[RMDB]
RNA sequence: GGGAACGACUCGAGUAGAGUCGAAAAGUAGUGGAGAAGAAAGAAGUGGAAACACUUCGCGCGCGUCCACUACAACGUGCGCAGUAUUGGAGUGUUUGAGGGAGAACCUCAAGCACUCCAGUACAAAAAUGAUGGUCGGUUUCGACCGACCAUCAUUAAAAGAAACAACAACAACAAC
Reactivity to DMS in 0.01 (KOAc 150mM, MgCl2 10mM, bicine 150mM(pH8.5), 24C), signal-to-noise 2, nucleotides 027 to 126: g000u000a000g000u000g000g020a070g010a070a130g010a120a070a150g000a000a010g070u000g000g000a100a080a260c020a020c010u010u010c010g000c090g020c100g020c130g000u000c000c000a010c000u000a000c020a160a020c090g040u050g020c020g000c000a190g000u000a010u000u000g000g000a020g030u000g020u000u000u050g020a000g000g020g000a260g040a160a110c000c000u000c000a000a020g010c010a000c020u000c000c000a000g000u000a000c000a000a030a040
Reactivity to 2A3 in 0.01 (KOAc 150mM, MgCl2 10mM, bicine 150mM(pH8.5), 24C), signal-to-noise 2, nucleotides 027 to 126: g010u000a010g020u040g120g100a210g020a170a060g050a010a280a000g020a010a000g000u000g000g010a010a000a000c000a000c020u000u010c010g000c010g020c010g000c020g110u000c020c050a020c000u020a000c000a000a000c040g060u070g000c010g010c070a060g000u000a000u020u000g010g010a000g000u000g010u000u000u000g010a000g010g000g010a120g080a240a240c000c000u000c000a000a000g000c000a000c000u000c000c000a000g020u010a000c000a000a110a000